[RMDB]
Record summary:
Chemical mapping of a 177-nucleotide RNA with DMS. Conditions: 150 mM KOAc, 10 mM MgCl2 and 150 mM bicine (pH 8.5), 24 C.
RNA sequence: GGGAACGACUCGAGUAGAGUCGAAAAUUAAAGCGGUCUCUGAGGUAGGAGAGAGAGAGAGAGAGAGCUUACCGCUUUUCAAAGUGGCUCUCUGUCUGACUCUUAAGCUCGAGUCGUUCCCAAAAAAUAUAUACUCAUUGUUCGCAAUGAGUAUAUAAAAAGAAACAACAACAACAAC
Reactivity to DMS in 0.01 (KOAc 150mM, MgCl2 10mM, bicine 150mM(pH8.5), 24C), signal-to-noise 2, nucleotides 027 to 126: u010u010a040a060a090g010c020g000g000u000c010u010c010u000g010a130g000g010u020a080g020g000a060g000a050g000a080g010a100g010a090g010a040g010a030g010a030g000a020g000c020u000u010a080c040c020g010c060u000u000u010u000c170a070a140a070g010u000g000g010c000u000c010u010c000u000g000u010c040u010g000a060c010u000c000u010u010a080a090g010c000u000c000g000a010g000u000c010g000u000u000c000c010c000a000a010a030a050a040a030